[RMDB]
RNA sequence: GGGAACGACUCGAGUAGAGUCGAAAAACGGUGACUAUACGUAGUCACCGAACGGUGGUGAAAGACAUGGGUAGUGAGACGUUAGAAUUUCAAGGUCGUAUCACUAUUCUGUUUUUCGCCUCGUAAAUCUCCGUUCCGGAUUCGUCCGGAACGGAGAAAAAGAAACAACAACAACAAC
Reactivity to 2A3 in 0.01 (KOAc 150mM, MgCl2 10mM, bicine 150mM(pH8.5), 24C), signal-to-noise 1, nucleotides 027 to 126: a000c000g010g010u010g000a000c000u010a010u080a080c190g060u000a000g000u000c000a000c000c000g000a050a000c010g000g010u130g000g000u000g000a000a000a000g030a010c000a050u300g010g000g000u000a030g000u000g000a050g000a050c090g020u070u040a130g030a080a250u280u090u180c060a230a060g210g030u110c000g020u000a090u030c000a000c000u000a000u020u000c000u000g030u000u000u000u000u000c000g000c030c010u020c000g000u000a000a000a140